[RMDB]
RNA sequence: GGGAACGACUCGAGUAGAGUCGAAAAUUUCGCUUUAGUUCAAGCAUCCAUGGCAGGGGCUCAACACAGAAGGCUAGCCUUAUAAAACUGUUGAUGAUGUCUUCUAUUUCUGCCAUGAAGCACGGGGGUUACUGAAAGACUUCGGUCUUUCAGUAACAAAAGAAACAACAACAACAAC
Reactivity to 2A3 in 0.01 (KOAc 150mM, MgCl2 10mM, bicine 150mM(pH8.5), 24C), signal-to-noise 1, nucleotides 027 to 126: u000u030u050c020g000c060u110u070u120a040g000u110u100c100a020a010g040c020a100u090c030c010a000u010g000g000c000a020g060g000g020g040c020u000c030a000a040c060a040c020a080g090a070a010g070g000c030u060a010g000c020c010u070u080a220u120a080a190a040a090c040u090g060u190u120g070a060u010g020a030u140g050u000c010u130u010c090u090a220u090u180u000c010u010g020c000c000a000u000g020a010a010g050c020a020c040g030g000g020g020
Reactivity to DMS in 0.01 (KOAc 150mM, MgCl2 10mM, bicine 150mM(pH8.5), 24C), signal-to-noise 2, nucleotides 027 to 126: u000u010u010c100g000c050u000u010u000a140g010u010u000c160a100a100g030c050a140u010c050c000a000u000g010g000c000a010g010g000g010g000c040u010c030a000a070c030a010c060a030g000a050a040g010g010c080u000a100g020c010c010u010u000a150u000a020a110a050a300c040u000g010u020u000g020a100u000g010a020u000g010u000c030u000u030c160u010a090u000u010u010c020u000g010c020c000a010u000g010a050a100g000c050a140c140g000g020g000g020
This 177-nucleotide RNA was probed chemically with 2A3 and DMS. The reactions ran in a buffer of 150 mM KOAc, 10 mM MgCl2 and 150 mM bicine (pH 8.5), at 24 C. DMS adducts were read by reverse transcription with MarathonRT. It was measured as part of the RMDB library OK2TRN.